[RMDB]
RNA sequence: GGGAACGACUCGAGUAGAGUCGAAAACAACCGGAAGUGGACCGAGCGAGAUUCGUGGCCGGUCCCGUUCGAGCGCCAUCGUCAGGGCUCGUAGUGCCCGGUGGUGCUCGCGGGCUUCCGCGGCCGCCGAUGAGUGGAGGUUCGCCUCCACUCAUCGAAAAGAAACAACAACAACAAC
Reactivity to DMS in 0.01 (KOAc 150mM, MgCl2 10mM, bicine 150mM(pH8.5), 24C), signal-to-noise 2, nucleotides 027 to 126: c210a130a110c140c010g040g010a000a060g020u010g020g000a020c010c020g020a130g040c070g000a090g020a180u030u020c150g010u040g020g020c000c000g000g020u000c000c000c090g000u040u030c040g000a000g030c010g000c010c040a000u000c010g040u060c180a200g000g020g000c000u010c220g020u000a130g010u010g000c020c000c000g030g000u000g000g010u000g000c000u010c010g000c030g000g000g000c260u030u010c040c030g010c040g020g000c020c040g000c080
Reactivity to 2A3 in 0.01 (KOAc 150mM, MgCl2 10mM, bicine 150mM(pH8.5), 24C), signal-to-noise 3, nucleotides 027 to 126: c030a000a060c000c030g010g050a110a040g050u100g030g040a050c000c020g020a040g040c030g030a130g010a200u110u150c080g040u080g040g000c000c000g020g020u000c000c000c000g000u040u100c020g000a000g000c000g000c010c000a010u020c000g240u160c130a180g000g000g010c030u030c100g050u140a120g030u040g050c000c000c000g000g000u000g010g000u000g010c000u000c000g010c000g000g000g000c050u120u020c020c030g100c000g030g000c000c020g000c030
Chemical mapping of a 177-nucleotide RNA with DMS and 2A3. For DMS the reverse transcriptase was MarathonRT. Reactivities are given for positions 27 through 126.